The record gives the reactivity of an RNA of 177 nucleotides to DMS and 2A3. Source: RMDB library VIROID, as collected in RNAgym. Conditions: 150 mM KOAc, 10 mM MgCl2 and 150 mM bicine (pH 8.5), 24 C. For 2A3, 2,324 sequencing reads were counted.
[RMDB]
RNA sequence: GGGAACGACUCGAGUAGAGUCGAAAAGGGACCCUCCCGAUCCGAGUGGCCCGGCCACCGAGUUUGGAGGGCACUCCGGGCUCAACGGUUGAGUAGCACUCGGAGGGAGGAACCACACGGAGUAGAACUCCCUAUAAAUGUUCGCAUUUAUAGGGAGAAAAGAAACAACAACAACAAC
Reactivity to DMS in 0.01 (KOAc 150mM, MgCl2 10mM, bicine 150mM(pH8.5), 24C), signal-to-noise 3, nucleotides 027 to 126: g000g000g010a190c230c010c010u000c000c010c010g010a110u000c020c010g000a030g040u000g000g010c010c020c000g020g000c000c010a100c300c130g000a010g000u000u000u000g010g010a060g000g010g010c300a040c010u000c000c000g000g000g000c000u000c010a080a150c270g010g020u000u000g010a020g010u000a120g010c020a020c000u000c000g010g000a060g020g010g000a030g010g000a000a040c040c010a080c100a110c090g000g000a130g000u010a090g000a090a190
Reactivity to 2A3 in 0.01 (KOAc 150mM, MgCl2 10mM, bicine 150mM(pH8.5), 24C), signal-to-noise 1, nucleotides 027 to 126: g030g000g030a040c010c010c010u000c010c010c010g040a090u010c000c010g010a000g010u010g070g060c020c000c000g000g040c010c010a050c060c080g000a000g030u000u020u030g020g010a020g020g040g020c010a130c030u030c000c000g020g010g000c000u020c020a000a060c060g050g000u020u020g030a040g050u070a030g100c000a000c010u000c000g000g000a010g000g010g000a000g000g000a010a010c000c000a030c000a020c080g110g050a070g040u210a050g070a060a030